[RMDB]
RNA sequence: GGGAACGACUCGAGUAGAGUCGAAAACGCAGUCGACGCUGACGAAGACGAUCCGCGAGUUCGAACAGGCGCUCGGCGUGCACGUGUUCGAGCGCAAUACGCGGCGCAUCGCGCUCACGCCGUACGACACGCACGUACUCUUCGGAGUACGUGCGUGAAAAGAAACAACAACAACAAC
Reactivity to 2A3 in 0.01 (KOAc 150mM, MgCl2 10mM, bicine 150mM(pH8.5), 24C), signal-to-noise 1, nucleotides 027 to 126: c070g000c040a030g020u040c070g020a060c060g030c070u050g000a090c000g000a080a060g000a020c010g020a090u070c000c010g040c030g020a020g070u100u140c040g010a110a020c050a080g080g070c010g000c060u030c070g040g000c040g020u000g000c060a050c150g050u070g010u120u120c020g020a000g030c000g000c160a020a030u100a050c110g000c040g000g050c040g020c000a060u040c030g040c000g010c050u040c000a020c020g050c040c060g070u000a130c020g040a030
Reactivity to DMS in 0.01 (KOAc 150mM, MgCl2 10mM, bicine 150mM(pH8.5), 24C), signal-to-noise 1, nucleotides 027 to 126: c190g020c060a200g000u000c010g000a070c080g000c030u000g000a080c020g030a110a140g000a090c010g000a130u000c000c030g010c070g000a100g000u000u000c050g000a040a170c150a090g000g020c000g010c030u000c010g010g000c050g000u010g010c140a010c240g000u000g020u000u000c060g000a000g000c000g010c060a120a020u000a080c030g010c010g000g000c110g000c060a090u000c080g010c030g040c130u000c000a050c090g000c000c000g000u020a040c040g010a240

This 177-nucleotide RNA was probed chemically with 2A3 and DMS. For 2A3, 1,281 sequencing reads were counted. Values are in units of 0.01, from 0 to 300, in steps of 10. Conditions: 150 mM KOAc, 10 mM MgCl2 and 150 mM bicine (pH 8.5), 24 C. For DMS the reverse transcriptase was MarathonRT.